[RMDB]
RNA sequence: GGGAACGACUCGAGUAGAGUCGAAAAUUUCGCGUGGAUUGUUGUGCUGUUGAUUGGCUGGAUGUUUAAACGCCGCCACGAUCGUCAGCUGGCUGAAAACCAGUAAUCCUUGCGUUCUGUAAGCCGGCAUUAAUAGGUGCUUCGGCACCUAUUAAUGAAAAGAAACAACAACAACAAC
Reactivity to DMS in 0.01 (KOAc 150mM, MgCl2 10mM, bicine 150mM(pH8.5), 24C), signal-to-noise 5, nucleotides 027 to 126: u000u000u010c020g020c020g020u010g000g000a050u000u000g020u000u010g020u000g020c030u000g010u010u000g010a080u000u000g010g010c010u020g050g010a070u010g020u010u010u010a090a130a110c100g000c010c030g010c020c020a030c280g020a030u000c030g000u000c020a040g010c010u000g010g030c030u000g000a090a060a110a190c040c000a040g010u000a030a030u000c040c010u000u000g010c020g010u000u000c060u010g010u010a080a150g010c020c040g010g000
Reactivity to 2A3 in 0.01 (KOAc 150mM, MgCl2 10mM, bicine 150mM(pH8.5), 24C), signal-to-noise 3, nucleotides 027 to 126: u040u050u020c010g010c020g040u020g010g010a040u010u030g030u050u060g060u100g030c010u000g020u050u040g020a050u020u030g030g030c100u130g050g050a180u050g130u060u210u210a120a190a020c090g000c020c020g030c000c000a030c090g040a030u010c000g040u010c000a000g010c010u040g030g000c040u090g120a030a010a070a110c030c000a000g010u040a010a030u000c000c000u000u130g020c020g020u020u040c060u060g060u060a050a050g040c010c030g030g050
The data come from the RNA Mapping Database (RMDB), library OK2TST. The record gives the reactivity of an RNA of 177 nucleotides to DMS and 2A3. Values are in units of 0.01, from 0 to 300, in steps of 10. For 2A3, 3,286 sequencing reads were counted. The reactions ran in a buffer of 150 mM KOAc, 10 mM MgCl2 and 150 mM bicine (pH 8.5), at 24 C.